[RMDB]
RNA sequence: GGGAACGACUCGAGUAGAGUCGAAAACUAAUUAAAAUUACAGUUCAGGGAUGUUUACUUUUAAAUAUGGAUCAGUAAAAUAUUUCUGACUUCCAAAAGAUGCAUCAUAACAGCUUAGGUGGUUUUUAUGACAUUAAACUACUUUUAGUACUAUGUAAUGACUAAUUUAUUUCGAUAAAUUAGUCAUAAAAGAAACAACAACAACAAC
Reactivity to 2A3 in 0.01 (KOAc 150mM, MgCl2 10mM, bicine 150mM(pH8.5), 24C), signal-to-noise 1, nucleotides 027 to 156: c010u090a040a090u280u090a100a200a100a040u160u120a080c010a000g040u050u110c030a030g060g040g120a050u000g030u120u050u080a130c000u040u100u060u280a020a290a080u300a090u210g030g000a040u070c040a000g000u020a010a090a220a150u070a040u040u170u010c030u040g030a060c050u060u060c070c010a070a120a000a000g040a000u020g030c010a000u000c020a000u050a100a060c070a090g040c000u040u090a010g000g100u040g030g020u000u040u000u000u090a140u080g060a010c010a040u000u140a010a010a010c040u170a000c000u040u170u000u020a010g020u000a010c030u100a150u220g070u280a060
Conditions: 150 mM KOAc, 10 mM MgCl2 and 150 mM bicine (pH 8.5), 24 C.
The record gives the reactivity of an RNA of 207 nucleotides to 2A3.
It was measured as part of the RMDB library OK3TST.
Reactivities are given for positions 27 through 156.
For 2A3 the reverse transcriptase was SuperScript II with manganese.